[RMDB]
RNA sequence: GGGAACGACUCGAGUAGAGUCGAAAAGACAGCGCCCAACGCUUCACAACCUGCAAGAAGCGCCUGUUAUCAGGACGGUUGAUCCAUUUACCGGUGCAGACCUCUGCAAACACCGGGUUGCAGAACAUAGAGGGAAAUUUGUUCGCAAAUUUCCCAACUUAAGCUCCAUGUUCGCAUGGAGCUUAAGAAAAGAAACAACAACAACAAC
Reactivity to DMS in 0.01 (KOAc 150mM, MgCl2 10mM, bicine 150mM(pH8.5), 24C), signal-to-noise 1, nucleotides 027 to 156: g000a060c010a110g000c120g050c040c030c030a040a070c000g000c010u000u000c020a100c000a130a140c160c060u000g000c070a170a180g010a000a010g000c050g050c000c060u000g000u020u000a120u000c050a130g030g020a060c020g010g000u000u030g000a210u010c000c010a160u010u000u010a010c000c000g080g030u010g010c010a090g030a090c030c070u040c040u000g020c080a100a120a020c000a040c000c040g000g000g040u000u030g000c030a060g000a070a140c030a180u000a090g000a230g030g000g010a010a010a040u000u010u000g020u000u020c300g000c040a040a030a050u000u000u010c000c010c010a000a020
Reactivity to 2A3 in 0.01 (KOAc 150mM, MgCl2 10mM, bicine 150mM(pH8.5), 24C), signal-to-noise 1, nucleotides 027 to 156: g160a000c070a050g010c070g050c080c010c000a010a050c010g030c000u000u010c000a020c020a060a020c030c000u000g000c000a010a010g030a000a000g020c000g040c010c010u040g000u100u190a070u300c010a030g000g040a000c020g020g000u000u100g050a180u090c040c020a010u070u090u180a090c000c010g000g000u050g000c000a000g160a300c020c030u110c050u100g030c020a100a070a030c050a000c020c000g000g000g050u000u130g050c020a030g020a030a020c080a080u180a170g080a140g140g000g000a000a000a000u000u000u010g010u040u060c210g000c130a000a000a000u000u000u000c000c010c000a000a000

Annotation
An RNA of 207 nucleotides, treated with DMS and 2A3 and read out base by base. The reactions ran in a buffer of 150 mM KOAc, 10 mM MgCl2 and 150 mM bicine (pH 8.5), at 24 C. High 2A3 reactivity points to a flexible backbone, as in loops and unpaired stretches. The data come from the RNA Mapping Database (RMDB), library M2RFPK. For DMS the reverse transcriptase was MarathonRT.